Structure probing data (2A3 and DMS) for a 207-nucleotide construct.
Values cover nucleotides 27 to 156.
[RMDB]
RNA sequence: GGGAACGACUCGAGUAGAGUCGAAAAGUAAUCAUUAUGAGUCACUCACCCUGUUUUCUGUAUAACUAACAUGGGCAACGAAUAUUGGACGCAGGACUCAUCAGCAUCAACGCUAUGCCAACACGAAACGUUGGCACAAGGUGAGUGUAAGAAACCAAUCUUAUCCCAUUUUCGAAUGGGAUAAGAUAAAAGAAACAACAACAACAAC
Reactivity to 2A3 in 0.01 (KOAc 150mM, MgCl2 10mM, bicine 150mM(pH8.5), 24C), signal-to-noise 9, nucleotides 027 to 156: g120u130a060a090u100c090a060u060u190a050u210g030a010g070u040c010a010c060u020c010a020c000c020c020u010g030u020u050u030u030c060u050g110u070a130u050a190a150c080u040a060a050c040a140u130g060g020g010c070a120a050c060g090a100a040u120a100u090u140g040g010a020c070g000c050a020g020g020a010c020u010c040a030u030c040a010g030c000a030u110c070a090a060c090g000c040u040a020u100g000c000c010a010a000c040a020c100g250a070a130a020c110g000u000u000g000g000c000a000c010a010a010g020g000u000g010a030g000u020g010u040a050a050g050a100a030a000c040c030a020
Reactivity to DMS in 0.01 (KOAc 150mM, MgCl2 10mM, bicine 150mM(pH8.5), 24C), signal-to-noise 4, nucleotides 027 to 156: g020u000a100a090u000c060a120u010u000a080u010g010a160g020u000c030a070c060u000c040a050c000c010c020u010g010u000u000u010u000c040u020g020u000a130u000a070a130c050u000a040a050c040a080u010g000g010g020c030a070a090c090g010a120a110u000a160u000u000g030g010a080c070g020c020a160g010g010a080c030u000c040a050u000c030a090g030c020a070u000c050a040a120c050g010c040u000a070u000g020c000c010a020a010c010a130c040g020a120a070a300c140g000u000u000g010g030c030a010c020a010a020g010g020u000g000a200g010u000g000u000a050a100g020a080a070a080c030c010a060
Background:
The RNA was probed in 150 mM KOAc, 10 mM MgCl2 and 150 mM bicine (pH 8.5) at 24 C.